[RMDB]
RNA sequence: GGGAACGACUCGAGUAGAGUCGAAAAGCUUUUCUAAACCCAGCCUCAUAUAUGUGGAAGCUAGCGAGUAUUACCCUGCUAGAUACCAAUCACACCUGAUGCUCGCAGCGGGCCACUCUGAGCCCGGAUUUAAACUACCCUUCGGGGUAGUUUAAAUAAAAGAAACAACAACAACAAC
Reactivity to 2A3 in 0.01 (KOAc 150mM, MgCl2 10mM, bicine 150mM(pH8.5), 24C), signal-to-noise 1, nucleotides 027 to 126: g020c010u080u050u050u040c100u070a080a130a110c000c000c030a010g020c010c000u060c000a020u120a060u110a040u300g010u020g030g010a010a040g020c020u040a050g040c000g020a000g000u000a070u080u050a030c060c000c000u030g010c040u020a040g040a060u080a120c040c040a060a040u040c030a010c020a020c060c010u010g050a010u030g020c000u010c010g070c000a020g000c010g010g110g000c030c000a060c040u170c040u050g040a030g000c010c020c000g000g060
Reactivity to DMS in 0.01 (KOAc 150mM, MgCl2 10mM, bicine 150mM(pH8.5), 24C), signal-to-noise 3, nucleotides 027 to 126: g020c090u010u010u000u010c050u010a070a090a150c080c020c010a100g000c050c020u000c030a060u010a090u010a050u000g000u000g010g030a120a150g010c020u000a060g030c000g010a020g020u010a090u010u010a070c100c030c040u010g030c080u010a080g000a060u000a090c200c130a100a050u000c030a060c050a040c070c060u000g010a020u000g000c000u000c040g030c060a060g000c010g000g020g000c020c010a050c080u000c130u010g000a090g000c040c000c010g000g020
An RNA of 177 nucleotides, treated with 2A3 and DMS and read out base by base. For 2A3, 838 sequencing reads were counted. Reactivities are rounded to 0.1 and cut off at 0 and 3. Reactivities are given for positions 27 through 126. DMS adducts were read by reverse transcription with MarathonRT. The reactions ran in a buffer of 150 mM KOAc, 10 mM MgCl2 and 150 mM bicine (pH 8.5), at 24 C. It was measured as part of the RMDB library OK2TST.